[RMDB]
RNA sequence: GGGAACGACUCGAGUAGAGUCGAAAAAGUUUAUGACGGUGGCAAUUUCUCAAAAAAAGGGGGACUGCCAAUGUUUUUGCUUGUUUGCUCUUUCCCUAGAAAGGAAUAGUAGUGACUGUCUUUGAAGCUAUUUUCAGUUGUUCGCAACUGAAAAUAGAAAAGAAACAACAACAACAAC
Reactivity to 2A3 in 0.01 (KOAc 150mM, MgCl2 10mM, bicine 150mM(pH8.5), 24C), signal-to-noise 3, nucleotides 027 to 126: a000g060u090u110u060a160u170g030a030c040g040g010u020g000g010c000a000a020u000u050u010c000u000c000a110a170a120a060a040a020a080g020g000g010g010g020a000c000u010g000c000c020a010a010u010g020u000u010u010u050u060g050c040u050u040g060u140u170u150g000c000u000c000u030u030u000c000c000c000u060a100g230a180a080a010g060g010a030a040u100a110g120u070a010g020u010g110a060c070u070g050u050c050u000u070u120g080a070a020g050
Reactivity to DMS in 0.01 (KOAc 150mM, MgCl2 10mM, bicine 150mM(pH8.5), 24C), signal-to-noise 4, nucleotides 027 to 126: a020g010u010u030u020a010u010g000a010c000g010g000u040g000g010c000a020a040u000u000u010c000u020c000a000a000a080a130a090a170a110g010g000g000g000g000a000c070u000g010c010c000a030a050u020g010u000u000u000u010u010g000c020u000u000g000u010u010u010g010c030u000c020u010u000u010c000c000c000u000a110g000a090a140a140g000g000a020a020u030a040g010u020a030g000u000g010a080c150u020g000u000c070u000u000u010g020a170a060g010
Annotation
Chemical mapping of a 177-nucleotide RNA with 2A3 and DMS. Conditions: 150 mM KOAc, 10 mM MgCl2 and 150 mM bicine (pH 8.5), 24 C. It was measured as part of the RMDB libraries RFM100 and RFMREP.